[RMDB]
RNA sequence: GGGAACGACUCGAGUAGAGUCGAAAACGGAGCAGCCGCAGCUCACAGCCCAGAGGACGCCCAGAGCGGCAGCGCGCAGACAGACGGACCGACGGACUCCGCCGCGUCCACCUGUCUGCCCGGCCCGUCGAGGUAAUAUGUUCGCAUAUUACCUCGAAAAAGAAACAACAACAACAAC
Reactivity to 2A3 in 0.01 (KOAc 150mM, MgCl2 10mM, bicine 150mM(pH8.5), 24C), signal-to-noise 4, nucleotides 027 to 126: c070g030g010a030g010c030a010g030c010c010g020c030a020g020c010u020c030a070c020a010g060c000c020c010a040g050a070g040g020a030c030g030c010c020c020a050g020a010g070c050g010g000c000a010g080c020g000c020g000c010a000g000a000c000a000g010a010c050g000g000a000c000c030g010a030c020g010g130a260c070u060c100c000g010c000c000g030c070g000u000c000c000a020c010c000u000g000u000c000u000g000c000c000c000g020g010c000c020c010g040
Reactivity to DMS in 0.01 (KOAc 150mM, MgCl2 10mM, bicine 150mM(pH8.5), 24C), signal-to-noise 7, nucleotides 027 to 126: c080g000g010a120g030c010a090g010c000c000g010c020a190g000c020u020c030a070c090a150g000c030c010c040a120g010a100g000g000a070c080g000c030c020c070a120g000a090g000c010g010g010c030a070g020c030g040c170g020c000a010g010a010c000a010g010a160c120g000g010a020c020c000g020a030c000g000g000a190c120u050c020c000g010c010c000g010c180g000u000c000c010a170c060c000u000g000u000c000u000g000c000c020c010g000g010c000c010c010g010